[RMDB]
RNA sequence: GGGAACGACUCGAGUAGAGUCGAAAAAGGAGUGAUGGUCUGCCAUUAUGAUAGAGAAUUGCUAGGGAGGUGUCUCAUAGCACGCUUUAAUACAUCUACAGUAAUGAUGGGAGCAGAAAGUAGAUUAAAAGUAUUAUCGCUUCGGCGAUAAUACUUUAAAAGAAACAACAACAACAAC
Reactivity to DMS in 0.01 (KOAc 150mM, MgCl2 10mM, bicine 150mM(pH8.5), 24C), signal-to-noise 2, nucleotides 027 to 126: a050g030g030a050g040u000g000a070u000g010g010u000c010u000g000c040c030a080u000u000a030u010g000a180u000a050g020a070g000a070a080u000u000g000c030u000a050g000g010g040a040g020g030u000g000u010c090u000c040a080u000a060g000c060a070c300g000c040u000u000u010a040a150u000a090c140a050u000c050u000a020c050a150g000u000a040a030u010g000a090u000g000g000g010a110g010c060a040g000a040a070a100g010u000a030g010a100u010u010a050
Chemical mapping of a 177-nucleotide RNA with DMS. The RNA was probed in 150 mM KOAc, 10 mM MgCl2 and 150 mM bicine (pH 8.5) at 24 C. Source: RMDB library OK2TRN, as collected in RNAgym.